[RMDB]
RNA sequence: GGGAACGACUCGAGUAGAGUCGAAAACAGAAAGACUGAGGAUGUGUCCUGGCAAAAACACAGCCUGCCCCUCACACUGCUCCCCACGGGUGCACUAGGGAGGAAGAGUUCCCUCGAGGGCCUGAGCAGGCGCCCCACACCUGCACCCGUGCAGAGGGACCUAAAUAAAGUUCGCUUUAUUUAGGUCAAAAGAAACAACAACAACAAC
Reactivity to DMS in 0.01 (KOAc 150mM, MgCl2 10mM, bicine 150mM(pH8.5), 24C), signal-to-noise 2, nucleotides 027 to 156: c030a130g010a120a070a100g000a120c050u000g010a040g030g010a050u010g010u010g000u000c050c030u020g020g000c090a070a100a090a050a040c010a040c010a050g010c010c010u000g010c040c000c020c000u010c040a160c060a080c040u000g020c040u000c000c000c030c030a050c060g030g010g030u000g000c010a030c040u000a100g000g050g020a060g000g000a050a130g000a180g020u000u000c020c000c010u010c040g010a110g000g010g000c010c030u000g000a120g030c110a090g010g020c080g050c040c000c020c020a140c040a090c050c050u000g020c000a020c000c010c030g000u010g000c030a050g010a110g000g000
Reactivity to 2A3 in 0.01 (KOAc 150mM, MgCl2 10mM, bicine 150mM(pH8.5), 24C), signal-to-noise 3, nucleotides 027 to 156: c030a010g100a070a190a000g080a030c070u060g010a020g030g040a080u080g090u030g020u110c080c090u060g050g030c060a060a070a000a130a010c070a020c030a040g020c010c000u000g000c030c000c010c000u020c010a060c000a000c010u050g030c010u010c000c010c000c000a000c000g000g010g000u010g000c000a010c080u150a110g040g000g010a040g070g040a090a040g060a060g110u070u050c020c030c010u020c010g040a220g000g000g030c020c030u070g010a050g060c060a040g070g000c010g020c010c000c000c010a090c010a030c020c010u000g010c000a000c000c000c000g010u010g000c010a020g030a030g070g070
Background
Structure probing data (DMS and 2A3) for a 207-nucleotide construct. Reactivities are given for positions 27 through 156. Source: RMDB library OK3TST, as collected in RNAgym.